[RMDB]
RNA sequence: GGGAACGACUCGAGUAGAGUCGAAAACGGCAGUGGCAUCGGUAUGUGACCUAAGGUAUCUUCCCGCGACCUUUAAGCGUCCUCGCCGAUACGCUACUUCUCUAGGUCGUGUAUCGUUCUGCUAUGGUCUACUCAUCGUCUUCGGGCGAUGGGUAGAAAAAGAAACAACAACAACAAC
Reactivity to DMS in 0.01 (KOAc 150mM, MgCl2 10mM, bicine 150mM(pH8.5), 24C), signal-to-noise 9, nucleotides 027 to 126: c080g010g010c040a050g000u010g010g000c080a030u000c010g010g010u000a110u020g000u030g010a020c010c010u000a040a040g000g000u010a040u040c080u010u010c020c010c010g010c300g000a040c030c010u000u010u030a070a070g010c090g010u000c020c020u000c150g000c030c020g000a030u000a020c060g010c020u000a070c060u010u010c030u010c070u010a030g000g000u000c000g010u000g000u020a000u000c010g000u000u010c030u000g000c040u010a090u030g000g010
Reactivity to 2A3 in 0.01 (KOAc 150mM, MgCl2 10mM, bicine 150mM(pH8.5), 24C), signal-to-noise 9, nucleotides 027 to 126: c020g040g000c020a010g010u020g040g020c030a030u040c010g000g000u030a020u060g080u090g010a010c000c000u010a020a000g010g000u020a030u040c030u040u050c010c000c010g010c040g020a040c000c000u020u020u110a100a010g030c040g030u010c000c010u050c080g010c000c000g010a010u010a020c020g000c000u010a020c000u060u020c010u000c010u020a010g020g040u000c000g000u000g000u010a000u010c010g010u020u010c010u020g050c020u030a070u140g090g000